[RMDB]
RNA sequence: GGGAACGACUCGAGUAGAGUCGAAAAAUCAUCCUGGUGGCUGACCACAUCACUGAAACGCGGUGGGGUGAGGUCCUUAAAUUUACUGAUGGCCUUCAGGUCAUCACUUCUGUCAUCGCAUGCGAUGCCGUUAGGUGUAGUUCGCUACACCUAACGGAAAAGAAACAACAACAACAAC
Reactivity to DMS in 0.01 (KOAc 150mM, MgCl2 10mM, bicine 150mM(pH8.5), 24C), signal-to-noise 4, nucleotides 027 to 126: a080u010c120a060u000c020c010u010g010g010u000g010g010c070u010g000a130c060c030a080c060a070u040c080a050c060u000g010a080a050a150c260g010c060g000g010u000g000g000g000g010u000g010a060g010g000u000c020c060u000u010a040a110a070u000u010u010a110c230u000g010a020u000g000g000c010c000u010u010c300a160g030g010u000c010a000u000c000a030c150u010u010c110u000g000u010c010a020u000c030g010c060a110u000g020c030g010a030u000g010
Reactivity to 2A3 in 0.01 (KOAc 150mM, MgCl2 10mM, bicine 150mM(pH8.5), 24C), signal-to-noise 5, nucleotides 027 to 126: a000u070c030a040u020c010c010u050g100g050u080g050g000c040u040g060a070c010c010a010c000a050u040c010a020c020u070g100a130a150a050c120g040c010g050g060u020g020g020g020g000u020g050a100g050g030u040c000c000u130u130a110a220a210u300u260u180a100c080u050g000a000u020g000g000c010c000u130u220c150a090g000g000u000c000a000u000c000a000c020u110u090c030u050g140u060c010a010u000c000g040c080a050u150g070c030g020a010u020g020